[RMDB]
RNA sequence: GGGAACGACUCGAGUAGAGUCGAAAAGAUAUGGAACCCAUCGUUACGCACUGGACAUGCUGGAGUACGUUUCGGAAACGAAAUGAAACAGCAACAGCCAGUGCGUAACGAGUGGGUUCCUAAGUCACCCUCCUAAUUGGUUCGCCAAUUAGGAGGGAAAAGAAACAACAACAACAAC
Reactivity to DMS in 0.01 (KOAc 150mM, MgCl2 10mM, bicine 150mM(pH8.5), 24C), signal-to-noise 2, nucleotides 027 to 126: g000a010u000a300u010g000g000a040a010c000c000c000a210u000c000g020u000u000a000c000g000c000a000c000u000g000g020a080c080a170u000g000c000u000g020g010a090g040u010a120c220g000u000u000u000c000g040g010a120a190a250c000g000a020a000a050u000g000a230a120a170c010a000g020c010a030a090c300a110g000c000c000a000g000u000g020c000g000u000a000a000c000g000a000g000u000g010g000g010u000u010c000c000u010a000a050g000u010c050a250
Reactivity to 2A3 in 0.01 (KOAc 150mM, MgCl2 10mM, bicine 150mM(pH8.5), 24C), signal-to-noise 1, nucleotides 027 to 126: g050a040u110a080u220g000g020a000a000c040c000c000a010u050c000g000u000u000a010c000g000c000a000c010u020g000g050a080c070a250u080g000c000u020g040g010a010g030u000a050c140g000u020u020u020c050g000g020a050a100a090c040g010a010a000a030u230g050a020a000a010c000a000g000c000a030a080c060a020g010c000c000a000g000u000g000c020g000u000a000a000c000g000a000g000u020g000g000g000u000u020c010c000u000a000a020g000u000c020a070